[RMDB]
An RNA of 177 nucleotides, treated with 2A3 and DMS and read out base by base.

RNA sequence: GGGAACGACUCGAGUAGAGUCGAAAACGUUAGUGCUGGUGAUCUGCGAGCAUUCCUGGCGGACAAGGUCGUUCGCUGGUGGUUGCCGGAGCGGUGGGCGUUUGUCGACGAGAUUCCCCGCACCAGCGAUCCCGUGAGUGUUCGCACUCACGGGAUCAAAAGAAACAACAACAACAAC
Reactivity to 2A3 in 0.01 (KOAc 150mM, MgCl2 10mM, bicine 150mM(pH8.5), 24C), signal-to-noise 3, nucleotides 027 to 126: c020g000u070u100a180g080u120g280c000u020g020g040u040g040a070u060c010u070g040c010g100a160g040c040a020u060u120c020c010u020g000g020c020g000g000a000c010a110a130g300g130u250c120g050u050u020c020g000c010u030g020g060u200g000g020u010u020g000c020c030g030g050a050g000c070g010g040u080g060g050g000c010g000u060u040u040g060u040c030g010a080c170g020a020g010a120u020u030c000c020c000c030g000c010a020c000c020a000g000c020
Reactivity to DMS in 0.01 (KOAc 150mM, MgCl2 10mM, bicine 150mM(pH8.5), 24C), signal-to-noise 1, nucleotides 027 to 126: c030g020u000u020a080g010u020g020c030u000g000g010u010g000a180u010c010u000g020c050g000a150g000c030a020u000u000c020c040u000g010g000c020g000g010a020c030a150a160g040g010u000c200g020u000u000c020g020c000u000g010g030u020g030g000u000u000g020c000c000g020g010a060g010c120g020g020u000g000g010g010c030g000u000u000u000g000u010c010g010a110c200g000a190g000a070u010u000c010c010c000c080g030c010a020c010c030a010g000c020